[RMDB]
RNA sequence: GGGAACGACUCGAGUAGAGUCGAAAAGUCGGAGCGCCCAGAGAGGAUGGGGAGUCGUGCAGAGCCCUAAGCUGGGCCGCGUGUCCCUGUGUGGCGGGGUGGGAGAGCGUGGGCAGCGCCGGCCGCCCAUAGCCUCACAUUUCGAUGUGAGGCUAUGAAAAGAAACAACAACAACAAC
Reactivity to DMS in 0.01 (KOAc 150mM, MgCl2 10mM, bicine 150mM(pH8.5), 24C), signal-to-noise 4, nucleotides 027 to 126: g010u000c020g010g000a080g030c030g010c000c010c010a080g010a160g010a180g000g000a150u000g000g010g000g010a060g010u010c040g020u010g010c090a120g010a180g000c000c010c010u000a080a140g030c130u000g000g000g020c010c020g000c220g000u000g000u000c010c010c010u010g000u000g020u010g010g010c130g000g000g000g010u010g000g000g000a140g010a100g010c070g010u000g000g000g020c020a070g030c020g010c020c020g010g000c010c050g000c010c020
Reactivity to 2A3 in 0.01 (KOAc 150mM, MgCl2 10mM, bicine 150mM(pH8.5), 24C), signal-to-noise 5, nucleotides 027 to 126: g010u010c010g010g010a030g000c010g030c010c020c030a010g030a010g000a040g130g040a100u120g030g000g000g010a030g090u100c030g010u050g070c060a040g060a050g090c010c000c000u040a120a050g080c100u090g000g000g000c000c000g010c000g000u050g090u020c020c000c020u050g050u010g010u060g030g080c140g020g010g010g080u270g030g010g000a210g010a010g040c060g030u040g010g000g000c060a290g000c130g010c000c010g000g010c000c010g030c010c000